This 177-nucleotide RNA was probed chemically with DMS and 2A3. For 2A3 the reverse transcriptase was SuperScript II with manganese. It was measured as part of the RMDB library OK1LIB. DMS (dimethyl sulfate) methylates the pairing face of unpaired adenines and cytosines. For 2A3, 2,289 sequencing reads were counted. For DMS, 2,497 sequencing reads were counted.
RNA sequence: GGGAACGACUCGAGUAGAGUCGAAAAGUCAAGUGCUUGUUCAAGCUGUAUAGCCUGUUCUCGUGGAUUGUCAACGGGAAGCAUAAGUGCAUACACAUAUGAGCAGCUGUGCAGAGUAUCUCGCUACGGAGUGGCAUAUGUUCGCAUAUGCCACUCCAAAAGAAACAACAACAACAAC
Reactivity to DMS in 0.01 (KOAc 150mM, MgCl2 10mM, bicine 150mM(pH8.5), 24C), signal-to-noise 2, nucleotides 027 to 126: g000u000c060a030a100g030u020g090c020u000u000g000u000u020c120a130a160g010c200u000g000u000a000u000a020g000c010c000u050g030u000u000c000u030c030g010u000g000g000a160u070u030g000u050c060a150a000c000g010g000g000a020a140g040c070a050u010a040a040g080u080g030c060a030u030a040c020a000c050a080u020a070u000g050a030g040c020a060g000c000u010g000u000g040c060a100g000a040g080u010a040u000c000u000c070g000c220u000a090c250
Reactivity to 2A3 in 0.01 (KOAc 150mM, MgCl2 10mM, bicine 150mM(pH8.5), 24C), signal-to-noise 4, nucleotides 027 to 126: g120u090c110a110a060g080u010g050c040u090u040g020u040u010c040a090a000g060c110u000g000u020a040u020a010g030c000c000u010g010u040u010c020u010c040g020u010g000g100a280u280u200g150u280c040a030a030c000g030g060g020a060a040g070c020a060u130a240a040g020u110g090c040a030u040a050c000a010c010a040u110a040u180g020a030g040c010a020g030c040u000g040u000g060c030a010g000a030g160u070a090u010c010u010c050g030c030u000a080c120

The RNA was probed in 150 mM KOAc, 10 mM MgCl2 and 150 mM bicine (pH 8.5) at 24 C.